[RMDB]
RNA sequence: GGGAACGACUCGAGUAGAGUCGAAAAAGGGCCACCACAGGGAUGGUUCAUGCUGCCCGUAAGCCAUUGCACGCCCCUUGGCUCCACCCCUCCUCCUUCAGGUGUGUCCCGCACACAGUAGUGUCCUGUGCACUGGGGCUGUGGCUCUGCAGGGAGAGAUAGUGAAAAUCUUCGGAUUUUCACUAUCAAAAGAAACAACAACAACAAC
Reactivity to DMS in 0.01 (KOAc 150mM, MgCl2 10mM, bicine 150mM(pH8.5), 24C), signal-to-noise 2, nucleotides 027 to 156: a080g020g020g020c010c020a090c040c020a130c100a140g000g020g020a110u010g020g030u000u000c030a080u010g030c030u000g010c010c010c010g010u000a080a100g010c020c020a080u000u000g000c070a100c090g010c020c020c010c020u000u000g000g020c010u000c030c050a100c040c020c010c090u010c040c040u010c020c060u010u000c060a080g020g010u010g000u000g000u010c000c010c040g090c040a050c030a020c030a110g020u000a120g020u000g020u010c070c010u000g010u000g010c070a080c060u040g000g030g030g040c040u010g040u000g020g010c010u000c040u000g040c060a080g020g010g010a140g010a160
Reactivity to 2A3 in 0.01 (KOAc 150mM, MgCl2 10mM, bicine 150mM(pH8.5), 24C), signal-to-noise 3, nucleotides 027 to 156: a000g020g000g040c010c010a030c020c030a040c100a060g050g040g000a090u050g050g050u040u070c040a050u150g030c050u080g030c010c020c020g030u040a060a000g010c010c010a040u040u160g060c100a050c130g090c000c000c000c000u020u110g010g020c020u030c020c020a040c000c010c000c020u040c030c010u020c010c020u040u040c030a060g010g050u010g000u010g020u070c000c020c000g010c010a020c000a000c000a020g090u160a010g010u020g020u060c010c010u030g000u020g010c030a030c060u060g010g000g010g000c010u060g020u040g020g020c010u010c020u080g000c040a020g010g000g010a030g010a010